RNA sequence: GGGAACGACUCGAGUAGAGUCGAAAACUUGAAUUCGCCGCUCAACGACAAGAGCCACGAUGUCGAUAUUCUGGCCCGCACUGUCCCUUCUGGAGUGCUUGGGGAUGCGCUGAGGGUUACGUUGGCUUUGCGGCCGGUCAGGGUUUCCGGCGAGGGCUAUGCACACUAUAUUCGUAUAGUGUGCAUAAAAAGAAACAACAACAACAAC
Reactivity to DMS in 0.01 (KOAc 150mM, MgCl2 10mM, bicine 150mM(pH8.5), 24C), signal-to-noise 2, nucleotides 027 to 156: c050u000u000g020a120a170u000u000c020g020c000c030g030c050u000c050a040a130c020g020a080c110a090a110g020a120g010c000c010a030c060g000a050u000g000u000c060g020a110u000a080u000u010c070u010g030g010c010c000c030g000c030a030c040u010g010u000c000c000c030u000u000c060u000g000g010a130g030u000g020c090u000u010g000g010g010g020a060u000g000c110g000c060u000g010a060g000g010g000u000u010a060c100g020u000u000g010g010c050u000u010u010g010c020g010g030c000c010g020g010u000c020a190g000g010g010u000u000u020c040c000g020g010c010g000a080g010g020g040c110
Reactivity to 2A3 in 0.01 (KOAc 150mM, MgCl2 10mM, bicine 150mM(pH8.5), 24C), signal-to-noise 5, nucleotides 027 to 156: c020u030u130g050a030a040u120u050c030g020c020c000g060c030u080c040a100a090c040g060a030c030a080a080g020a030g080c000c000a020c040g070a060u090g030u070c030g040a040u030a070u210u090c070u050g050g000c010c020c010g040c020a020c050u060g050u070c020c010c000u090u030c060u150g130g080a110g060u100g040c030u050u090g020g000g000g030a010u050g010c040g000c100u040g040a070g000g000g030u050u040a020c030g030u040u070g020g000c000u010u050u110g120c000g010g030c020c020g040g000u010c010a050g000g000g060u000u080u040c040c000g020g010c010g000a040g010g040g010c040